[RMDB]
RNA sequence: GGGAACGACUCGAGUAGAGUCGAAAAUAGGUCUGCGUAAAGCGGGCGCUAAAGACGAUGGCCUGUACGAUGCUGAGAAAGUUGAGUUCUUCGGUGCGCGUCUGGUAGCUCAGAGUAAGGCUGGUGGCUUCGAGAGAGCGUUCGCGCUCUCUCGAAGAAAAGAAACAACAACAACAAC
Reactivity to 2A3 in 0.01 (KOAc 150mM, MgCl2 10mM, bicine 150mM(pH8.5), 24C), signal-to-noise 1, nucleotides 027 to 126: u130a010g000g000u010c000u000g000c000g250u150a070a080a080g000c000g000g000g020c000g040c010u070a100a300a000g050a010c060g110a120u020g050g040c000c000u050g010u040a000c030g110a090u080g080c050u000g000a000g230a210a080a000g000u060u130g070a080g050u030u030c000u000u080c080g000g050u210g080c000g000c000g090u030c060u010g000g000u030a050g000c000u080c080a040g000a040g070u030a110a000g030g050c020u100g020g000u000g000g200
Reactivity to DMS in 0.01 (KOAc 150mM, MgCl2 10mM, bicine 150mM(pH8.5), 24C), signal-to-noise 1, nucleotides 027 to 126: u000a050g010g030u000c000u040g030c020g060u000a010a040a270g000c030g000g000g000c000g010c030u040a020a070a070g000a050c060g020a090u020g000g040c030c030u000g020u000a080c180g010a100u050g020c020u000g000a110g000a090a100a170g000u000u000g000a290g000u000u000c000u070u020c140g000g020u010g000c080g040c000g050u020c040u030g000g010u010a010g000c020u010c000a010g000a110g050u000a150a070g000g000c000u000g000g030u030g000g000